[RMDB]
RNA sequence: GGGAACGACUCGAGUAGAGUCGAAAAGUUCAUCCCCUGAUCAAGGAUGCCCGAAACGGUGAGGCGGAAAGCAAAUUAAAUAACGUCAACCCAUCGGGACGGUUGGCCAGUUAAGAAGUGAGGAUUCAAAAGAUCGAACCGUUCGCGGUUCGAUCAAUCAACUGUAAAACUUCGGUUUUACAGUUGAAAAAGAAACAACAACAACAAC
Reactivity to DMS in 0.01 (KOAc 150mM, MgCl2 10mM, bicine 150mM(pH8.5), 24C), signal-to-noise 1, nucleotides 027 to 156: g030u010u010c010a040u010c050c010c010c060u000g050a100u010c060a150a080g000g010a100u010g020c100c020c020g000a090a120a290c120g000g000u000g000a040g070g000c060g000g000a080a110a090g010c030a050a100a200u020u000a040a060a140u000a080a100c060g000u000c010a040a000c000c010c020a190u020c040g020g030g060a060c080g000g000u000u000g000g000c050c020a160g000u000u000a130a070g000a040a070g000u010g000a010g010g020a220u000u000c100a050a030a060a130g010a050u000c010g000a000a000c000c020g000u010u020c260g010c050g020g000u020u010c000g010a010u010c020a000a140
Reactivity to 2A3 in 0.01 (KOAc 150mM, MgCl2 10mM, bicine 150mM(pH8.5), 24C), signal-to-noise 3, nucleotides 027 to 156: g060u050u120c050a070u020c060c000c000c000u050g030a090u040c010a030a030g040g010a050u060g040c010c010c000g030a080a100a010c080g000g010u050g010a120g040g020c020g000g030a120a030a020g120c120a100a050a110u170u110a100a050a090u200a080a010c020g000u000c020a010a010c010c000c000a050u050c000g020g000g000a000c010g020g010u010u010g020g000c030c030a020g020u070u120a090a070g030a100a000g040u110g050a040g060g070a080u060u080c040a050a000a050a080g000a000u000c000g000a000a000c010c010g000u040u070c190g000c010g040g000u000u010c000g000a000u000c000a000a000